Annotation: Structure probing data (2A3 and DMS) for a 177-nucleotide construct. DMS adducts were read by reverse transcription with MarathonRT. The RNA was probed in 150 mM KOAc, 10 mM MgCl2 and 150 mM bicine (pH 8.5) at 24 C.
RNA sequence: GGGAACGACUCGAGUAGAGUCGAAAAUGCAUCUUCCGCCCGGCGAUCAGUAAGUGCACCAGAUUGGGAUUAACCUUCAAAAGCUGCAGCUUAACUAUUCCCAGUAAUGUCCACUUACAAGGAGCCCGCAGUUGAUUAGAUUCGUCUAAUCAACUGCAAAAGAAACAACAACAACAAC
Reactivity to 2A3 in 0.01 (KOAc 150mM, MgCl2 10mM, bicine 150mM(pH8.5), 24C), signal-to-noise 7, nucleotides 027 to 126: u090g030c020a060u030c040u090u010c030c030g050c030c020c000g000g000c020g030a080u020c010a010g000u030a030a000g010u010g000c020a010c000c010a030g010a220u030u050g000g000g020a020u050u080a070a070c040c040u120u140c110a110a150a050a000g010c040u160g090c110a080g020c000u080u030a040a020c060u040a090u050u030c000c010c000a010g000u030a020a060u060g010u020c030c000a000c010u000u010a010c010a040a050g090g010a010g010c000c020c040
Reactivity to DMS in 0.01 (KOAc 150mM, MgCl2 10mM, bicine 150mM(pH8.5), 24C), signal-to-noise 2, nucleotides 027 to 126: u010g000c100a100u010c060u000u000c030c060g010c030c020c070g000g000c020g000a070u010c110a120g000u020a010a010g000u020g000c300a020c090c080a230g000a030u020u000g010g000g000a030u010u000a070a060c110c070u000u000c160a040a160a070a020g010c030u010g030c140a100g000c050u030u000a070a060c140u000a070u000u020c000c000c000a060g000u010a110a080u020g000u000c170c000a010c000u000u010a060c020a090a090g010g010a300g000c020c030c170
Record summary:
Source: RMDB libraries RFM100 and RFMREP, as collected in RNAgym.